Annotation
Structure probing data (2A3 and DMS) for a 207-nucleotide construct. The RNA was probed in 150 mM KOAc, 10 mM MgCl2 and 150 mM bicine (pH 8.5) at 24 C. The DMS profile rests on 3,861 reads. It was measured as part of the RMDB library OK3TST.
RNA sequence: GGGAACGACUCGAGUAGAGUCGAAAAUCUUUGCAAUGACCCCCAGAAGGAAUCAUGCUAUUGUACUAGAAGAGUUUCUGCAUUUCCAGUAUGUGUCACACACUACUGGAUGCUCUGUAUGUAUUUAUCUCCAAUGAAUCCUCCCAAUAGUCGUGCACUGACGUAAUAGGUUCGCCUAUUACGUCAGAAAAGAAACAACAACAACAAC
Reactivity to 2A3 in 0.01 (KOAc 150mM, MgCl2 10mM, bicine 150mM(pH8.5), 24C), signal-to-noise 5, nucleotides 027 to 156: u030c020u060u100u090g010c050a150a300u170g040a080c030c030c010c010c010a020g020a060a020g050g010a030a020u040c010a010u060g020c040u120a060u120u110g030u030a030c020u040a040g110a150a000g020a080g030u080u140u140c130u110g120c080a080u040u100u000c010c000a000g000u020a070u300g040u070g060u150c030a080c010a000c000a000c150u000a000c010u000g000g000a000u000g000c000u010c010u000g090u040a070u090g050u010a020u040u190u050a070u060c100u040c050c070a060a040u020g010a030a070u030c000c010u030c030c040c000a040a020u070a060g030u050c030g030u030g010c010a010
Reactivity to DMS in 0.01 (KOAc 150mM, MgCl2 10mM, bicine 150mM(pH8.5), 24C), signal-to-noise 3, nucleotides 027 to 156: u000c050u000u010u020g000c030a120a170u010g000a030c030c000c020c020c080a300g010a070a060g030g020a070a030u010c010a070u000g010c060u000a100u000u010g020u020a040c100u000a160g000a100a040g010a090g030u000u000u000c090u010g010c120a070u000u000u000c030c000a100g000u000a020u000g030u000g010u000c300a220c140a300c010a010c010u000a030c000u010g000g000a030u000g000c020u020c000u000g020u010a100u000g000u000a030u000u000u000a030u030c030u000c010c010a080a090u020g010a070a090u010c010c020u010c010c010c050a030a080u000a080g000u010c020g000u010g020c060a300
For DMS the reverse transcriptase was MarathonRT.